[RMDB]
RNA sequence: GGGAACGACUCGAGUAGAGUCGAAAAGAUAUGGACCUUUAGAAUGCGCAGCGUUUCCCUAAGACAGAGCUUCGGAAACGAAGCUUCGAGGGAAACGCUGAACUACGCAUUAUAAAGGUCCUAAGUCCUCUGAGAUUUAGUUCGCUAAAUCUCAGAGAAAAGAAACAACAACAACAAC
Reactivity to DMS in 0.01 (KOAc 150mM, MgCl2 10mM, bicine 150mM(pH8.5), 24C), signal-to-noise 3, nucleotides 027 to 126: g010a130u000a270u020g010g010a020c000c000u000u010u010a020g010a020a000u000g010c020g010c000a010g000c000g030u000u000u000c010c000c010u010a240a140g000a120c300a170g010a030g010c010u000u000c000g020g000a180a140a120c020g010a010a010g020c000u000u000c020g000a030g000g000g000a010a010a010c000g000c000u000g000a040a040c190u000a300c040g020c010a010u000u000a060u000a000a010a020g010g010u000c000c000u000a020a090g010u000c100
Annotation
This 177-nucleotide RNA was probed chemically with DMS. Conditions: 150 mM KOAc, 10 mM MgCl2 and 150 mM bicine (pH 8.5), 24 C.